[RMDB]
RNA sequence: GGGAACGACUCGAGUAGAGUCGAAAAAAGCAUUUCGAUGCUUCUGUUGCGUACUACAUGAUAACGAGCAUCGAUCGUGCGACCCAGCUUUCCCAAAUAGGAAAGCUGCGCACGGGAGCUCGGAAGCAUGUAUCGCCUUAAAGGUCUUCGGACCUAACUCGCAAUAUACUUUCGAGUAUAUUGCGAGAAAAGAAACAACAACAACAAC
Reactivity to 2A3 in 0.01 (KOAc 150mM, MgCl2 10mM, bicine 150mM(pH8.5), 24C), signal-to-noise 4, nucleotides 027 to 156: a000a010g040c040a030u120u080u200c240g090a040u020g030c000u100u060c070u190g300u300u130g000c010g030u060a150c070u000a020c070a020u020g030a050u120a220a050c010g000a000g010c010a200u180c060g090a120u050c020g010u000g030c010g120a150c100c040c000a000g000c000u030u000u040c020c010c020a270a300a230u190a100g000g000a010a000a000g000c000u000g000c000g000c000a000c000g000g020g020a010g000c000u000c000g000g000a140a020g020c010a000u010g010u010a050u300c000g020c010c010u100u130a220a260a020g000g010u000c020u000u090c220g120g010a000c000c020u030a050a050
Reactivity to DMS in 0.01 (KOAc 150mM, MgCl2 10mM, bicine 150mM(pH8.5), 24C), signal-to-noise 2, nucleotides 027 to 156: a010a020g020c010a040u000u000u010c180g010a030u010g020c000u010u000c070u010g020u000u000g020c000g050u000a200c130u030a030c010a010u000g030a030u000a170a300c010g020a030g000c000a300u000c140g000a090u000c010g000u000g030c020g030a130c110c150c100a040g000c000u000u000u000c000c000c020a080a140a270u000a050g000g020a020a010a020g040c010u020g000c000g090c010a030c000g010g000g010a110g000c030u000c010g000g000a120a090g000c010a000u000g000u000a020u000c040g000c050c060u030u010a080a130a100g010g000u000c000u000u000c300g050g010a050c000c010u000a020a050
This 207-nucleotide RNA was probed chemically with 2A3 and DMS. Conditions: 150 mM KOAc, 10 mM MgCl2 and 150 mM bicine (pH 8.5), 24 C. The 2A3 profile rests on 1,786 reads. For DMS, 2,818 sequencing reads were counted. DMS adducts were read by reverse transcription with MarathonRT.